[RMDB]
RNA sequence: GGGAACGACUCGAGUAGAGUCGAAAAGGUGGAGCACUUCCGGUAGACGGCCUCGCCGGAAUCGCUGCGCAGCACGUCUAUCUCGCCCGCGUCGGCCAGCGACUGCAGGGUGCGGUAGACGGUCGUCAACCCGAUGCCCUCUCCGCGGCUCCGCAGCGAGACGCUGAGGGUUCGCCCUCAGCGUCUCAAAAGAAACAACAACAACAAC
Reactivity to 2A3 in 0.01 (KOAc 150mM, MgCl2 10mM, bicine 150mM(pH8.5), 24C), signal-to-noise 1, nucleotides 027 to 156: g070g000u070g000g010a020g000c010a030c160u080u010c050c010g020g010u150a060g010a020c020g020g070c000c000u030c000g040c040c030g020g000a040a080u170c110g030c110u100g000c080g010c100a030g050c090a090c060g000u000c000u010a010u020c000u000c050g000c000c000c000g010c000g000u000c000g010g210c290c170a140g150c050g010a000c000u220g030c150a180g010g000g000u020g060c010g020g000u000a000g000a000c000g020g010u010c050g000u000c030a080a090c040c010c000g000a040u070g030c020c000c010u030c040u010c000c010g040c030g100g000c000u060c010c060g060c000a020g040c010
An RNA of 207 nucleotides, treated with 2A3 and read out base by base.
The RNA was probed in 150 mM KOAc, 10 mM MgCl2 and 150 mM bicine (pH 8.5) at 24 C.
2A3 adducts were read by reverse transcription with SuperScript II with manganese.
Source: RMDB library OK3TST, as collected in RNAgym.
The 2A3 profile rests on 609 reads.